[RMDB]
RNA sequence: GGGAACGACUCGAGUAGAGUCGAAAAGCCGCAUGAUGAAAGGAGCAGGUCUGGGCGAGAUAGAGUUCGACAUCUGCGGCCUCGCCGGGGCUAGAGACCUGUCCUUGUCAUCAAGUAGACUAGCCCCCUAUAUAAUUAAAUUCGUUUAAUUAUAUAGAAAAGAAACAACAACAACAAC
Reactivity to DMS in 0.01 (KOAc 150mM, MgCl2 10mM, bicine 150mM(pH8.5), 24C), signal-to-noise 2, nucleotides 027 to 126: g000c010c020g000c090a070u050g000a010u010g020a100a050a000g010g000a080g030c000a010g000g020u000c000u010g010g020g010c010g010a010g010a110u000a070g000a130g020u030u030c100g010a090c080a030u010c020u000g000c010g010g000c050c010u000c000g000c010c040g010g010g010g020c050u010a030g000a030g000a010c000c000u000g010u000c000c010u010u000g010u020c060a060u000c090a040a110g020u020a060g000a070c010u000a060g000c020c000c000c230
Reactivity to 2A3 in 0.01 (KOAc 150mM, MgCl2 10mM, bicine 150mM(pH8.5), 24C), signal-to-noise 1, nucleotides 027 to 126: g010c000c000g000c010a010u110g000a010u000g030a000a040a000g000g030a120g050c000a000g000g010u000c010u030g000g070g000c010g000a000g010a000u070a030g080a000g100u100u120c040g020a000c070a070u050c030u080g010c000g000g000c000c000u000c000g020c000c000g020g010g020g000c020u030a010g000a000g000a070c000c000u000g000u010c000c000u030u060g040u010c000a060u030c020a020a000g040u030a010g010a020c000u000a010g010c000c020c000c040